[RMDB]
RNA sequence: GGGAACGACUCGAGUAGAGUCGAAAAGAUAUGGAUCAUCUGGACCUCGAUGAAAGUAGUCGGAAACGACUACUGGAGAGGAACCAGAGUGAUCCUAAGUCAAAACUAUCAGGUUCGCCUGAUAGAAGUACUACCGAAUCUUCGGAUUCGGUAGUACAAAAGAAACAACAACAACAAC
Reactivity to DMS in 0.01 (KOAc 150mM, MgCl2 10mM, bicine 150mM(pH8.5), 24C), signal-to-noise 2, nucleotides 027 to 126: g020a060u010a300u010g000g020a020u010c000a060u000c010u010g010g010a300c000c010u010c010g020a240u000g000a250a080a010g000u000a000g010u000c000g030g000a130a100a230c010g020a010c000u010a000c010u000g020g000a020g000a000g020g010a040a040c020c010a010g000a020g060u020g000a000u010c000c000u000a040a150g020u000c060a070a180a120a240c010u010a000u000c000a000g010g000u000u010c230g000c040c000u020g030a010u010a010g000a140a150
Reactivity to 2A3 in 0.01 (KOAc 150mM, MgCl2 10mM, bicine 150mM(pH8.5), 24C), signal-to-noise 1, nucleotides 027 to 126: g050a000u070a080u230g000g000a000u010c000a010u040c020u030g070g040a170c020c010u000c020g300a300u070g000a020a000a000g010u000a040g030u000c000g000g070a130a000a040c010g000a000c010u020a000c000u000g000g020a040g000a010g040g040a040a090c020c000a000g020a020g040u010g000a010u000c000c000u000a190a050g060u000c030a000a000a160a230c000u010a000u030c000a030g010g210u060u180c300g160c100c000u000g020a000u000a000g000a040a010
This 177-nucleotide RNA was probed chemically with DMS and 2A3. It was measured as part of the RMDB library TTRDES.